Source information:
Structure probing data (DMS and 2A3) for a 177-nucleotide construct.

[RMDB]
RNA sequence: GGGAACGACUCGAGUAGAGUCGAAAAUGAAGCUUUCCGGCGGUGAGCGUCAGCGCGUGGCAAUUGCCCGCGCCUUCCUCGCGGAUGCGCCGAUCCUCAUUCUGGACGAGGCCACAUCGAGCCUCGAGGACUAAUGAGUCUUCGGACUCAUUAGUCCAAAAGAAACAACAACAACAAC
Reactivity to DMS in 0.01 (KOAc 150mM, MgCl2 10mM, bicine 150mM(pH8.5), 24C), signal-to-noise 2, nucleotides 027 to 126: u000g020a050a060g010c160u000u000u010c110c020g010g060c080g030g000u000g010a100g020c140g010u000c060a040g000c000g040c000g000u000g050g020c040a300a190u000u010g010c040c000c040g040c000g010c010c020u000u000c070c050u000c080g010c120g000g010a120u000g020c100g030c000c010g000a080u000c140c010u000c040a080u000u030c070u010g000g030a160c030g000a050g000g000c000c000a130c110a130u020c130g000a130g030c000c000u010c000g010a110
Reactivity to 2A3 in 0.01 (KOAc 150mM, MgCl2 10mM, bicine 150mM(pH8.5), 24C), signal-to-noise 2, nucleotides 027 to 126: u070g020a070a000g040c070u050u050u000c080c000g020g000c040g000g080u070g060a030g030c030g080u060c050a000g030c000g000c020g010u090g010g000c090a220a300u300u300g000c000c030c030g000c000g000c030c000u040u060c000c000u020c000g000c080g080g040a040u080g030c030g000c010c010g030a050u030c000c000u030c020a070u180u000c050u020g000g080a080c030g000a010g000g040c000c000a160c030a300u200c050g040a050g020c000c010u020c000g010a050
The RNA was probed in 150 mM KOAc, 10 mM MgCl2 and 150 mM bicine (pH 8.5) at 24 C. For 2A3 the reverse transcriptase was SuperScript II with manganese.